[RMDB]
Description
This 177-nucleotide RNA was probed chemically with 2A3 and DMS. DMS adducts were read by reverse transcription with MarathonRT. For 2A3 the reverse transcriptase was SuperScript II with manganese. The DMS profile rests on 1,494 reads.
RNA sequence: GGGAACGACUCGAGUAGAGUCGAAAAACAUGGAAGAAAGUGCUAGAUUCACAAACGGCAAUCAACCAAUCACAGUAAGAAAAGUGGGGCCAUUCUUAUCUUGUCCAGUGGGUUAUCAGUUCCAACCCAUCCUGUCCCAAUUCGUUGGGACAGGAUGAAAAGAAACAACAACAACAAC
Reactivity to 2A3 in 0.01 (KOAc 150mM, MgCl2 10mM, bicine 150mM(pH8.5), 24C), signal-to-noise 3, nucleotides 027 to 126: a000c020a050u090g010g030a050a070g040a020a190a030g080u050g030c010u070a060g010a220u110u110c090a030c050a120a120a020c080g020g000c020a020a050u090c010a050a060c010c050a010a020u110c040a020c010a070g090u110a080a060g040a100a130a020a010g060u090g010g010g040g000c010c010a030u030u040c010u030u040a060u030c050u040u100g030u010c010c020a020g010u040g030g010g020u040u040a040u130c020a040g000u010u000c000c010a000a040c080c000
Reactivity to DMS in 0.01 (KOAc 150mM, MgCl2 10mM, bicine 150mM(pH8.5), 24C), signal-to-noise 2, nucleotides 027 to 126: a120c060a100u000g000g020a060a080g010a090a110a120g000u020g000c030u000a070g010a100u030u000c140a050c210a070a100a080c080g020g010c090a040a090u010c060a050a180c020c050a080a060u000c070a030c090a050g010u000a050a040g000a000a030a040a090g030u000g010g000g000g020c200c120a040u010u000c020u030u000a020u020c060u000u010g020u000c040c040a080g010u010g010g000g030u000u010a050u000c110a050g000u000u010c020c040a030a060c110c040